The record gives the reactivity of an RNA of 207 nucleotides to 2A3.

RNA sequence: GGGAACGACUCGAGUAGAGUCGAAAAUUGGAAGACGACGAGCGGGAAGAGGUUUCUCCUUCCAAAGGCCUUCAAACCUUACCUGCAUCACCCUUCACCGGUGCCAAAUCAGGCCUGAGUAUGAUGCUGGAGCGAGAUAAGGAGGAGCGGCGCGUGAUGACGCUGCAAAGUUCGCUUUGCAGCGUCAAAAAGAAACAACAACAACAAC
Reactivity to 2A3 in 0.01 (KOAc 150mM, MgCl2 10mM, bicine 150mM(pH8.5), 24C), signal-to-noise 1, nucleotides 027 to 156: u040u070g000g000a000a040g020a000c070g000a000c000g010a050g030c010g000g070g000a070a090g030a040g040g000u000u080u000c020u000c000c000u060u030c040c040a100a040a070g000g000c020c030u160u200c090a100a000a110c040c010u050u110a050c000c000u080g000c000a020u060c010a040c070c040c080u060u140c070a090c040c050g000g080u120g000c000c020a080a180a160u180c110a140g000g000c000c010u020g000a040g040u090a070u130g040a020u040g020c010u040g000g010a000g030c070g050a010g000a030u080a110a060g010g010a010g000g000a010g000c000g040g030c020g020c060g040u000g030a210
2A3 adducts were read by reverse transcription with SuperScript II with manganese.
The reactions ran in a buffer of 150 mM KOAc, 10 mM MgCl2 and 150 mM bicine (pH 8.5), at 24 C.
The 2A3 profile rests on 578 reads.